Source information
Structure probing data (2A3 and DMS) for a 207-nucleotide construct. The RNA was probed in 150 mM KOAc, 10 mM MgCl2 and 150 mM bicine (pH 8.5) at 24 C.

RNA sequence: GGGAACGACUCGAGUAGAGUCGAAAAAGGGGGGUGUGAUCCAGGUACCGCCGUAGAAACUGGAUUACGACGUCUACCCGGGAUUCAAACCCGGUCCCCUCCAGAAGUGAUUCUGGAAGAAGAGUCGCGCUUAGCGCACUGAUGAGUCUUUGAGAUACAUCGUUAAUAACUUCGGUUAUUAACGAUGAAAAGAAACAACAACAACAAC
Reactivity to 2A3 in 0.01 (KOAc 150mM, MgCl2 10mM, bicine 150mM(pH8.5), 24C), signal-to-noise 3, nucleotides 027 to 156: a000g010g010g000g000g000g000u030g010u000g020a000u000c000c000a000g020g030u060a060c030c090g120c040c060g050u100a060g160a050a190a020c030u030g010g010a000u020u000a000c020g060a010c030g120u020c030u040a050c010c010c020g000g010g000a080u230u150c070a110a110a120c010c010c000g000g010u010c000c010c010c000u010c000c000a010g000a030a000g050u070g060a140u040u000c010u020g020g000a010a010g020a090a010g050a000g050u140c080g000c020g000c060u110u130a040g010c010g000c010a020c040u070g080a190u120g020a040g060u020c050u070u200u150g130a120g020a030u070a080
Reactivity to DMS in 0.01 (KOAc 150mM, MgCl2 10mM, bicine 150mM(pH8.5), 24C), signal-to-noise 2, nucleotides 027 to 156: a110g000g000g030g030g030g020u000g020u000g020a030u020c000c010a070g020g020u000a120c090c020g030c040c160g000u000a100g010a100a110a270c030u000g000g000a170u010u000a080c020g010a040c020g000u000c020u010a050c050c000c010g000g000g010a130u010u000c150a090a150a220c010c000c000g020g010u000c030c000c010c050u010c010c000a010g000a040a030g020u010g000a300u000u000c010u020g010g030a050a080g010a090a140g010a080g030u000c090g030c000g010c020u000u000a170g050c020g020c040a070c070u000g000a120u000g010a150g000u000c030u000u000u000g010a090g010a300u000a240